[RMDB]
Annotation:
Chemical mapping of a 207-nucleotide RNA with 2A3. Conditions: 150 mM KOAc, 10 mM MgCl2 and 150 mM bicine (pH 8.5), 24 C. For 2A3 the reverse transcriptase was SuperScript II with manganese. Reactivities are given for positions 27 through 156.
RNA sequence: GGGAACGACUCGAGUAGAGUCGAAAACUCGGGCUUCUAGGCAGGCAGCAGACAUGGAGAUAGGACUGGUGGUCGUGAUGCUUAACCUUGAGCCAUUACUACCAGGAAGGGAGGGAGAGAAACUUGGGUGUACUGAGUGCCAACUGUUACCAGGCUAGAUAUAGGUGCGAUUCGUCGCACCUAUAUCAAAAGAAACAACAACAACAAC
Reactivity to 2A3 in 0.01 (KOAc 150mM, MgCl2 10mM, bicine 150mM(pH8.5), 24C), signal-to-noise 2, nucleotides 027 to 156: c040u050c040g010g020g020c020u140u040c030u100a050g010g070c030a020g040g000c000a060g040c040a010g040a060c030a090u080g070g000a050g060a090u100a080g080g050a060c010u010g020g020u020g000g000u040c010g000u010g050a140u140g000c000u050u070a120a200c040c070u090u250g010a010g000c000c010a000u010u000a010c000u080a000c000c000a030g040g030a030a070g030g070g050a070g010g010g010a070g010a020g000a000a160a000c060u060u080g020g010g000u040g020u010a090c070u090g060a010g070u050g040c000c010a010a010c060u030g080u140u030a110c030c050a000g000g000c000u030a040